Chemical mapping of a 177-nucleotide RNA with DMS and 2A3. The reactions ran in a buffer of 150 mM KOAc, 10 mM MgCl2 and 150 mM bicine (pH 8.5), at 24 C. Source: RMDB libraries RFM100 and RFMREP, as collected in RNAgym.
RNA sequence: GGGAACGACUCGAGUAGAGUCGAAAAUGAAAGCAGGUCCCAAAUGCCUUGGUGGUUUUUCGCCGUAGUGAUACAACAUCGAAGCCAUACGAUAUCACCGGGUGAAAAACUCCCAAGGUCGGGACAUUCACAAUGACAGAUUCGUCUGUCAUUGUGAAAAAGAAACAACAACAACAAC
Reactivity to DMS in 0.01 (KOAc 150mM, MgCl2 10mM, bicine 150mM(pH8.5), 24C), signal-to-noise 3, nucleotides 027 to 126: u040g000a100a090a140g000c160a090g030g000u000c010c000c000a120a100a100u030g020c000c000u000u000g000g040u000g020g000u000u000u000u000u000c020g000c000c020g050u020a110g010u000g000a020u000a090c200a170a180c280a070u000c040g000a140a150g040c180c200a140u050a230c110g000a080u000a030u000c000a030c000c060g020g030g030u000g000a000a000a010a000a000c000u000c240c000c000a020a010g030g020u000c120g000g000g000a040c030a090u020
Reactivity to 2A3 in 0.01 (KOAc 150mM, MgCl2 10mM, bicine 150mM(pH8.5), 24C), signal-to-noise 5, nucleotides 027 to 126: u190g040a040a040a010g110c130a060g080g120u040c010c000c020a060a110a120u240g010c000c000u000u010g000g010u030g030g010u000u000u000u000u010c010g020c000c010g070u170a040g000u010g010a000u020a040c060a160a010c030a220u070c080g100a070a030g100c020c010a070u070a240c060g050a050u000a000u040c000a000c000c020g050g000g010u050g000a000a000a010a000a000c000u010c000c000c000a000a000g000g020u000c000g000g000g000a000c000a010u010